An RNA of 207 nucleotides, treated with DMS and 2A3 and read out base by base.
RNA sequence: GGGAACGACUCGAGUAGAGUCGAAAAUACCCCAGGGUGGAAAGAAAAACCAAAGUGGCUGAAUCUAAAAUAGCACUUCCCCUUUAUGAGGAAAGUCAUCAUUUUUCCGGCAACAGGGGCUUUCCACAAUGGUAUCUCUGGGUUAUAAGGAAACCUCGCUAUGUAUGUCAUUCGUGACAUACAUAGCAAAAGAAACAACAACAACAAC
Reactivity to DMS in 0.01 (KOAc 150mM, MgCl2 10mM, bicine 150mM(pH8.5), 24C), signal-to-noise 1, nucleotides 027 to 156: u020a170c010c010c000c030a110g010g000g050u000g020g010a080a050a070g010a060a070a110a100a170c080c060a030a090a210g000u000g030g020c000u020g010a060a150u000c080u010a040a070a110a160u030a010g000c050a060c030u000u000c020c000c000c020u000u020u000a080u020g000a030g000g000a020a070a020g000u000c090a140u030c100a280u040u000u000u000u000c040c000g010g050c020a000a130c150a090g010g000g040g000c020u000u000u000c000c020a020c020a070a110u000g000g010u000a060u020c020u000c010u010g010g040g020u000u000a030u000a060a200g020g000a120a080a050c020c010u010c240
Reactivity to 2A3 in 0.01 (KOAc 150mM, MgCl2 10mM, bicine 150mM(pH8.5), 24C), signal-to-noise 2, nucleotides 027 to 156: u050a010c000c010c020c030a020g070g020g010u030g010g020a000a000a030g030a000a100a020a020a010c060c020a080a040a030g030u050g090g060c040u050g070a050a030u110c060u190a110a100a020a080u140a090g020c010a000c030u010u020c010c010c010c000u060u080u080a150u160g000a050g020g010a000a030a000g050u050c040a140u050c040a080u200u100u050u030u000c050c000g070g070c030a060a000c020a120g000g000g050g030c000u000u000u000c000c000a000c000a000a070u070g070g000u090a100u040c100u020c030u110g000g000g000u050u060a080u030a140a040g050g020a040a040a020c030c040u060c050
For 2A3 the reverse transcriptase was SuperScript II with manganese. In probing experiments dimethyl sulfate is read out at A N1 and C N3, which are open when not base-paired. As a SHAPE reagent, 2A3 marks flexible, mostly unpaired nucleotides at the ribose 2'-OH. DMS adducts were read by reverse transcription with MarathonRT. For DMS, 1,639 sequencing reads were counted. It was measured as part of the RMDB library OK3TST.